[RMDB]
RNA sequence: GGGAACGACUCGAGUAGAGUCGAAAAGAUAUGGAGUUGCGAGGAUCACAGUAUUGCGCGAAACUCGGAAACGAGGAGCAAUCUGUGGGAGCAACUCCUAAGUCAAAUCGGAAGUUCGCUUCCGAAACAUAUGCCAAAUCUUCGGAUUUGGCAUAUGAAAAGAAACAACAACAACAAC
Reactivity to 2A3 in 0.01 (KOAc 150mM, MgCl2 10mM, bicine 150mM(pH8.5), 24C), signal-to-noise 4, nucleotides 027 to 126: g020a010u070a050u130g000g000a000g000u000u000g000c020g050a300g130g000a020u020c000a010c000a010g170u300a050u020u030g000c040g010c050g120a150a080a070c010u000c000g010g010a070a060a010c010g000a020g020g040a180g000c010a000a010u000c000u000g000u000g000g010g000a020g000c000a000a000c000u000c000c000u000a020a000g010u010c020a020a010a120u030c000g010g000a000a000g010u030u080c150g050c100u010u010c000c010g010a020a010a010
Reactivity to DMS in 0.01 (KOAc 150mM, MgCl2 10mM, bicine 150mM(pH8.5), 24C), signal-to-noise 4, nucleotides 027 to 126: g010a050u000a300u010g010g000a020g020u000u000g010c000g010a090g000g000a050u020c000a010c000a020g010u010a000u000u000g020c010g010c120g010a060a090a160c000u000c010g000g000a110a080a160c000g010a010g000g000a180g000c000a010a010u000c000u000g010u010g000g000g000a040g010c010a010a000c000u000c000c000u010a020a070g010u000c040a050a120a130u000c000g010g010a030a010g010u000u000c200g010c010u000u000c000c000g010a000a050a200